[RMDB]
RNA sequence: GGGAACGACUCGAGUAGAGUCGAAAAACGGCUGGCUACGGCCAGCGGAAUCGGGCCAAAGGCAGUCGCCCGACGACACAGGCGAUCGUUCGCCCAAGCGCUGCACACGACUAUACGUAGUCGUGAAUUGAUCACGCAACCUUCGGGUUGCGUGAAACAGGCAAUAAUACUUCGGUAUUAUUGCCUGAAAAGAAACAACAACAACAAC
Reactivity to DMS in 0.01 (KOAc 150mM, MgCl2 10mM, bicine 150mM(pH8.5), 24C), signal-to-noise 1, nucleotides 027 to 156: a020c070g040g080c000u010g010g020c020u010a070c130g050g000c000c010a010g060c030g020g030a100a060u000c020g010g020g030c000c060a070a200a300g000g000c070a030g020u000c040g030c000c030c000g020a030c000g020a220c040a090c060a020g050g000c010g020a050u010c160g000u020u000c010g050c000c000c150a000a080g010c070g020c030u000g070c040a300c020a040c000g030a010c010u000a150u000a090c270g010u000a010g030u000c000g060u010g000a090a140u010u000g020a180u000c020a010c000g000c030a000a000c000c030u000u050c300g040g030g010u000u000g010c030g040u010g020a010a020a120
Reactivity to 2A3 in 0.01 (KOAc 150mM, MgCl2 10mM, bicine 150mM(pH8.5), 24C), signal-to-noise 1, nucleotides 027 to 156: a000c020g120g020c010u000g040g000c020u040a050c230g120g030c010c000a010g000c010g000g010a020a060u020c020g020g000g000c040c110a130a170a200g090g020c000a000g030u030c020g010c000c000c000g000a010c010g020a010c010a010c020a100g110g000c020g020a060u060c150g200u150u040c030g140c000c010c000a060a050g040c060g010c100u060g000c010a010c000a000c030g000a000c000u040a010u050a090c280g100u020a010g000u000c000g000u000g000a000a010u050u130g080a020u030c000a000c000g000c000a000a010c000c000u010u030c090g090g000g000u000u000g000c010g000u000g000a000a000a000
An RNA of 207 nucleotides, treated with DMS and 2A3 and read out base by base.
DMS adducts were read by reverse transcription with MarathonRT.
Reactivities are given for positions 27 through 156.
Source: RMDB library M2RFPK, as collected in RNAgym.